[RMDB]
RNA sequence: GGGAACGACUCGAGUAGAGUCGAAAAGAUAUGGACCCAGUUAAAGCCAACAGCCUGCGUCGGAAACGACGCAGGACAUGGCUGACUCGGGUCCUAAGUCAAAGGUGAGGAGUUCGCUCCUCACCAACAGUAGCUUCGAGUUCGCUCGAAGCUACUGAAAAGAAACAACAACAACAAC
Reactivity to DMS in 0.01 (KOAc 150mM, MgCl2 10mM, bicine 150mM(pH8.5), 24C), signal-to-noise 1, nucleotides 027 to 126: g010a050u010a130u010g000g010a000c000c000c030a050g010u000u000a080a130a020g010c000c000a180a080c100a110g000c000c010u020g000c000g010u000c000g000g000a050a030a090c010g000a040c010g010c000a010g000g000a000c000a060u010g100g040c000u010g040a020c000u000c270g020g000g000u000c000c000u000a010a070g010u000c050a050a160a200g010g030u000g000a030g000g000a000g000u000u030c300g000c010u000c000c020u000c000a000c000c000a010a030
Reactivity to 2A3 in 0.01 (KOAc 150mM, MgCl2 10mM, bicine 150mM(pH8.5), 24C), signal-to-noise 1, nucleotides 027 to 126: g020a000u040a000u020g000g000a000c020c000c030a000g010u040u110a300a240a110g010c010c020a300a020c050a190g060c000c020u000g020c010g000u030c000g020g000a040a010a050c000g000a010c070g040c000a020g000g030a010c000a100u170g030g010c040u010g000a000c020u130c230g030g040g000u000c010c000u010a000a020g000u000c080a100a090a140g020g000u000g010a010g030g000a010g030u040u050c180g110c250u000c000c080u060c000a000c000c000a010a010
Conditions: 150 mM KOAc, 10 mM MgCl2 and 150 mM bicine (pH 8.5), 24 C. This 177-nucleotide RNA was probed chemically with DMS and 2A3. 2A3 is a SHAPE reagent: it acylates the 2'-hydroxyl of flexible nucleotides of all four kinds. For 2A3 the reverse transcriptase was SuperScript II with manganese. The DMS profile rests on 1,306 reads. It was measured as part of the RMDB library TTRDES. For 2A3, 1,472 sequencing reads were counted.